[RMDB]
RNA sequence: GGGAACGACUCGAGUAGAGUCGAAAAUUAGUACUGUCUCUGGCGAUAAGCACGUUACACUAACUCGUGCUGGUGCAGAUAGCUCUUUGCUGUAUGCCAUGUCCCCAGAUUCGAGUUGGCUAAAUCUGUUUCCUGGCCCCAACUACAUUCGUGUGUACUAAAUAUUUCAGUUCGCUGAAAUAUUUAGAAAAGAAACAACAACAACAAC
Reactivity to 2A3 in 0.01 (KOAc 150mM, MgCl2 10mM, bicine 150mM(pH8.5), 24C), signal-to-noise 7, nucleotides 027 to 156: u060u020a020g010u030a030c010u040g010u010c000u010c000u020g010g010c030g030a040u030a110a040g010c000a000c010g040u090u160a150c180a080c150u170a200a030c050u030c040g000u000g000c010u010g000g050u180g000c000a010g030a080u040a010g010c020u030c100u230u180u300g000c000u010g020u070a030u030g020c000c040a050u090g030u000c070c050c010c000a020g040a040u030u040c050g080a000g030u040u080g110g000c020u020a030a040a090u070c060u090g070u040u060u020c010c000u030g090g030c010c000c010c020a060a050c040u130a040c030a110u040u200c100g060u100g010u010g000u120a030
Reactivity to DMS in 0.01 (KOAc 150mM, MgCl2 10mM, bicine 150mM(pH8.5), 24C), signal-to-noise 3, nucleotides 027 to 156: u010u000a050g010u000a050c040u000g020u010c030u000c030u010g010g030c050g030a110u010a130a070g020c010a040c030g000u010u000a130c130a140c140u000a080a130c090u010c040g020u010g050c010u000g020g030u000g020c030a080g010a090u010a040g020c030u000c190u000u000u000g010c000u000g040u000a070u010g010c000c070a240u000g000u000c020c050c010c000a080g020a120u000u010c030g010a130g020u000u000g000g020c070u010a050a070a060u000c050u000g000u000u000u000c010c010u000g030g000c020c030c010c050a030a100c040u000a040c040a150u000u000c140g000u000g040u000g010u010a140